The record gives the reactivity of an RNA of 177 nucleotides to 2A3 and DMS. The 2A3 profile rests on 1,382 reads. High DMS reactivity at an A or C suggests that its Watson-Crick edge is free.

[RMDB]
RNA sequence: GGGAACGACUCGAGUAGAGUCGAAAAUCCGUCGUUCCAUCCUUUUCUUACCUUGUGGCCGGCAUGGCCCCAGCCUCCUCGCUGGCGCCGGCUGGGCAACGAUCCGAGGGAACUAUUCCUCUCGAGAGGAAUCUUACUUGUUCGCAAGUAAGAUUCCAAAAGAAACAACAACAACAAC
Reactivity to 2A3 in 0.01 (KOAc 150mM, MgCl2 10mM, bicine 150mM(pH8.5), 24C), signal-to-noise 2, nucleotides 027 to 126: u000c020c000g000u000c000g010u030u000c020c010a120u110c040c010u040u120u090u060c030u070u120a130c050c000u000u110g030u030g120g060c030c020g000g050c050a190u100g040g010c000c000c000c000a000g000c000c010u160c020c020u060c060g000c000u010g000g020c030g030c000c000g000g010c020u000g000g040g000c010a040a050c020g050a030u000c010c020g000a000g000g000g020a020a030c040u150a150u180u060c000c010u020c000u000c020g210a260g020a020
Reactivity to DMS in 0.01 (KOAc 150mM, MgCl2 10mM, bicine 150mM(pH8.5), 24C), signal-to-noise 2, nucleotides 027 to 126: u000c020c020g010u000c020g000u000u000c000c000a160u040c100c050u000u000u000u000c030u000u000a090c070c070u020u000g010u010g000g030c000c040g000g030c040a070u020g030g020c040c140c000c000a020g000c000c100u000c150c110u020c160g020c010u010g000g010c300g020c020c000g000g000c020u020g040g020g000c020a040a030c040g000a070u020c040c040g010a030g000g030g000a060a150c190u010a140u000u000c020c000u000c010u000c020g000a180g000a090